[RMDB]
Structure probing data (DMS and 2A3) for a 177-nucleotide construct. The data come from the RNA Mapping Database (RMDB), library M2PK90. Values are in units of 0.01, from 0 to 300, in steps of 10. The reactions ran in a buffer of 150 mM KOAc, 10 mM MgCl2 and 150 mM bicine (pH 8.5), at 24 C.
RNA sequence: GGGAACGACUCGAGUAGAGUCGAAAAGCAAAGCUCAUGAAGCACAUGAAGCACAUGAAGCACAUGAAGCACAUGAAGCACAUGAAGCACAUGAAGCACAUGAAGCACAUGAAGCACAUGAAAAAAAGUAGCUUAAGUAGUUCGCUACUUAAGCUACAAAAGAAACAACAACAACAAC
Reactivity to DMS in 0.01 (KOAc 150mM, MgCl2 10mM, bicine 150mM(pH8.5), 24C), signal-to-noise 2, nucleotides 027 to 126: g000c070a050a120a190g040c000u010c000a000u000g000a080a120g060c020a300c010a000u010g010a060a120g010c010a280c040a060u000g000a100a120g070c000a300c020a010u000g000a090a110g040c030a140c180a030u000g020a070a160g020c030a150c000a020u000g000a070a070g000c020a270c030a020u000g000a120a120g000c000a200c000a050u000g000a020a080g000c020a190c090a020u010g000a010a120g040c000a170c110a080u010g000a000a000a000a080a120a150a010
Reactivity to 2A3 in 0.01 (KOAc 150mM, MgCl2 10mM, bicine 150mM(pH8.5), 24C), signal-to-noise 4, nucleotides 027 to 126: g090c040a080a030a020g000c010u010c010a010u020g050a120a020g000c010a010c000a040u020g100a170a030g050c010a020c000a030u030g040a190a030g000c010a010c000a030u030g050a130a030g030c010a030c010a120u140g140a170a040g020c030a020c000a050u010g070a150a020g010c020a000c010a050u030g050a120a020g000c010a010c000a050u010g060a100a040g010c000a000c000a050u010g050a060a020g010c010a040c000a100u180g090a040a090a000a000a000a030a090